[RMDB]
RNA sequence: GGGAACGACUCGAGUAGAGUCGAAAACAAAGCAGAUGGCGACGAACUUCGCUAUCGACGACGCCUGGUGUCCCGGAUGCGGACUUCACCGGCACGUCCACGGCGAACACCGCGCGGACUGCACGACCGAGCCGGCGCCGCUGAUGUGCGCCGACUGCGUUCUAGGAAUUUUCGAAUUCCUAGAACGAAAAGAAACAACAACAACAAC
Reactivity to DMS in 0.01 (KOAc 150mM, MgCl2 10mM, bicine 150mM(pH8.5), 24C), signal-to-noise 1, nucleotides 027 to 156: c080a090a080a120g010c050a070g010a040u010g000g010c000g000a100c070g020a120a180c120u010u000c020g010c040u010a060u000c010g020a060c040g020a030c090g020c030c010u000g080g020u000g000u000c070c010c060g020g000a150u010g020c060g050g020a060c060u000u000c020a040c060c040g080g000c000a230c030g020u000c000c110a080c050g020g030c000g000a040a020c070a090c030c000g000c060g030c030g000g020a070c020u020g000c030a130c040g000a080c000c090g000a040g050c030c000g040g040c000g070c010c040g000c140u000g010a130u000g000u000g020c040g010c010c000g020a000c020u000g000
Reactivity to 2A3 in 0.01 (KOAc 150mM, MgCl2 10mM, bicine 150mM(pH8.5), 24C), signal-to-noise 6, nucleotides 027 to 156: c040a010a120a030g010c010a010g000a160u300g130g000c020g040a270c030g020a200a070c050u010u010c020g000c010u070a070u200c010g000a000c010g070a070c080g010c010c030u170g000g000u030g010u020c010c030c020g060g070a240u300g080c150g010g010a040c020u110u040c090a020c010c010g000g000c010a010c020g000u000c020c020a010c090g020g000c010g010a010a010c030a040c050c010g000c000g000c000g020g140a020c000u010g000c030a030c050g050a030c020c010g020a010g000c010c000g000g010c020g010c000c020g080c150u250g090a140u210g100u140g000c000g010c000c000g000a000c000u010g000